The record gives the reactivity of an RNA of 207 nucleotides to 2A3 and DMS. The DMS profile rests on 2,286 reads. Conditions: 150 mM KOAc, 10 mM MgCl2 and 150 mM bicine (pH 8.5), 24 C. Values cover nucleotides 27 to 156. DMS adducts were read by reverse transcription with MarathonRT.

[RMDB]
RNA sequence: GGGAACGACUCGAGUAGAGUCGAAAAAGGACAAGCUGCUAGGCAUCCUUGCCUUUGAUGCCCCUAAACUGCAUCUUUUGAUACAUUUCAUUUGGCAGGCAGUUUAUAACAUGGCCAGUGAUCUGGAAGGAGGUGGUAAGUGGUAGAUGGAGAUGAGUCAGCAGGAUUAGUUCGCUAAUCCUGCUGAAAAAGAAACAACAACAACAAC
Reactivity to 2A3 in 0.01 (KOAc 150mM, MgCl2 10mM, bicine 150mM(pH8.5), 24C), signal-to-noise 2, nucleotides 027 to 156: a000g070g000a130c040a010a020g000c070u070g000c150u240a080g130g000c010a060u100c010c000u010u010g010c010c010u000u030u050g090a090u120g070c030c000c000c000u000a020a020a040c000u030g000c000a040u040c000u010u130u040u020g030a020u020a270c150a300u080u130u000c020a030u000u000u150g100g000c060a050g050g000c000a000g000u000u040u050a070u020a020a070c120a100u150g120g000c010c000a000g010u000g080a130u000c000u010g050g000a070a030g020g000a030g000g010u000g000g000u080a090a090g020u000g040g050u100a030g000a080u010g090g030a030g030a070u130g000a040g170
Reactivity to DMS in 0.01 (KOAc 150mM, MgCl2 10mM, bicine 150mM(pH8.5), 24C), signal-to-noise 1, nucleotides 027 to 156: a050g010g010a100c030a050a080g030c080u000g000c030u010a100g060g030c020a080u000c040c030u000u000g000c000c000u020u000u000g020a160u000g010c020c020c030c050u000a080a010a030c050u000g010c040a090u010c000u010u020u000u010g030a120u000a090c130a130u020u000u000c000a070u000u010u010g030g030c180a070g020g040c020a040g000u000u010u000a060u000a010a100c080a070u000g000g060c030c010a080g000u000g000a040u000c060u000g020g030a140a070g040g020a060g010g050u010g000g020u000a040a080g010u000g020g000u000a090g000a060u000g020g010a040g000a160u000g000a140g000